[RMDB]
RNA sequence: GGGAACGACUCGAGUAGAGUCGAAAAGAGCUCUAGAAGCGAUUGUAGACUGUUACAGCUUCUGCUAUCAGUCUGAGAUAGCUCAGGAUAGCUGGAGCUAUCUGCAACGGUGCAGACUCCAGUGACACCGUGAACAAUCGUUCAUGUCACAGAGCAGUCAUAAUUUAGCUUUCGAGCUAAAUUAUGAAAAAGAAACAACAACAACAAC
Reactivity to DMS in 0.01 (KOAc 150mM, MgCl2 10mM, bicine 150mM(pH8.5), 24C), signal-to-noise 7, nucleotides 027 to 156: g010a180g000c000u000c010u000a090g010a160a220g010c000g000a030u000u000g010u010a060g010a080c020u010g000u000u000a060c060a060g000c060u000u010c120u000g030c020u000a030u000c000a080g020u000c070u000g010a100g010a080u000a050g010c000u000c000a090g010g010a170u000a160g030c030u000g020g020a020g010c020u000a010u000c000u000g030c030a120a070c070g010g030u000g020c030a090g000a160c030u000c030c090a190g020u010g000a090c030a050c040c030g010u010g010a140a040c010a060a020u000c060g010u000u000c020a080u000g000u000c040a130c070a050g000a020g020c000a100g010
Reactivity to 2A3 in 0.01 (KOAc 150mM, MgCl2 10mM, bicine 150mM(pH8.5), 24C), signal-to-noise 9, nucleotides 027 to 156: g030a010g000c010u010c010u040a070g030a120a010g040c000g000a010u000u020g010u020a010g010a060c020u020g050u130u150a090c080a050g000c040u150u110c080u260g000c000u020a020u060c010a020g090u010c020u020g020a020g010a050u090a030g040c000u010c010a020g030g060a190u110a110g080c040u060g050g010a000g000c020u020a020u000c010u020g020c030a060a060c070g060g020u030g000c010a010g030a170c040u040c070c030a040g020u010g070a030c000a010c020c020g020u010g030a010a010c000a010a000u020c010g030u040u020c050a110u180g100u110c010a040c040a110g010a000g000c010a010g020